Structure probing data (2A3 and DMS) for a 177-nucleotide construct. For 2A3 the reverse transcriptase was SuperScript II with manganese. Values cover nucleotides 27 to 126. For 2A3, 3,781 sequencing reads were counted. The DMS profile rests on 2,332 reads. The reactions ran in a buffer of 150 mM KOAc, 10 mM MgCl2 and 150 mM bicine (pH 8.5), at 24 C. It was measured as part of the RMDB library TTRDEL.
RNA sequence: GGGAACGACUCGAGUAGAGUCGAAAAGAUAUGGAAGAAUCGGGAGUAACCAGUUCGGAAACGAACUAAUUUACGACGAUCGAGUUCUUCCUAAGUCAAAAUCCGACCCACUUCGGUGGGUCGGAAAUCAGUAUAAGCAGUUCGCUGCUUAUACUGAAAAAGAAACAACAACAACAAC
Reactivity to 2A3 in 0.01 (KOAc 150mM, MgCl2 10mM, bicine 150mM(pH8.5), 24C), signal-to-noise 2, nucleotides 027 to 126: g000a010u010a000u030g000g000a000a010g000a000a010u010c020g000g020g000a020g010u010a040a030c080c050a060g010u010u020c000g010g000a010a010a000c000g000a000a000c010u000a000a050u080u160u050a060c120g210a110c020g000a020u000c000g000a060g210u050u000c000u010u000c000c000u000a000a010g000u000c010a070a050a020a180u020c010c000g000a010c030c010c000a010c020u050u090c240g070g020u020g000g090g000u020c020g000g000a000a000a000
Reactivity to DMS in 0.01 (KOAc 150mM, MgCl2 10mM, bicine 150mM(pH8.5), 24C), signal-to-noise 2, nucleotides 027 to 126: g000a010u000a020u020g000g000a020a020g010a010a020u000c010g030g000g020a040g020u000a000a020c300c220a030g010u000u010c010g010g000a010a000a030c010g010a000a000c000u010a040a050u020u000u000a000c000g000a070c220g010a020u000c000g000a050g000u010u000c020u010u000c000c000u000a000a080g000u010c010a090a070a140a110u010c010c000g010a010c000c000c000a000c010u000u020c250g020g030u010g000g000g000u000c000g000g000a000a020a010